[RMDB]
RNA sequence: GGGAACGACUCGAGUAGAGUCGAAAAGAUAUGGACACCCCUACGAGCUGGUCGGAAACGACACAGCGAUGAGUAGAAGUGUCCUAAGUCAAAGGAGUUUUAUGACCUUCGGGUCAUAAAACUCCAACUUACGGUCUCAGUUCGCUGAGACCGUAAGAAAAGAAACAACAACAACAAC
Reactivity to DMS in 0.01 (KOAc 150mM, MgCl2 10mM, bicine 150mM(pH8.5), 24C), signal-to-noise 1, nucleotides 027 to 126: g000a020u020a300u010g000g010a020c010a040c000c020c030c020u000a000c040g000a170g030c010u010g000g000u000c000g000g020a090a020a160c020g000a000c000a040c000a000g010c000g000a040u000g000a290g020u020a000g000a050a040g000u010g010u000c010c000u000a040a070g020u000c050a020a110a130g000g010a020g020u000u010u000u010a010u000g000a000c000c000u000u010c200g000g030g000u000c000a000u000a000a000a010a000c010u010c010c000a010a010
Reactivity to 2A3 in 0.01 (KOAc 150mM, MgCl2 10mM, bicine 150mM(pH8.5), 24C), signal-to-noise 1, nucleotides 027 to 126: g030a020u090a050u150g020g000a010c000a000c030c050c030c010u000a020c050g000a010g000c010u010g000g030u030c000g030g090a100a070a060c030g030a010c260a030c010a300g020c010g080a260u120g060a000g000u000a000g020a210a070g010u000g010u000c000c000u020a140a000g120u030c030a100a030a120g000g000a000g000u050u050u000u040a010u000g000a000c000c030u000u080c300g110g000g000u010c000a000u000a000a010a000a000c000u000c000c010a010a010

The record gives the reactivity of an RNA of 177 nucleotides to DMS and 2A3.
In probing experiments dimethyl sulfate is read out at A N1 and C N3, which are open when not base-paired.
DMS adducts were read by reverse transcription with MarathonRT.
Conditions: 150 mM KOAc, 10 mM MgCl2 and 150 mM bicine (pH 8.5), 24 C.
Source: RMDB library TTRDEL, as collected in RNAgym.
For 2A3 the reverse transcriptase was SuperScript II with manganese.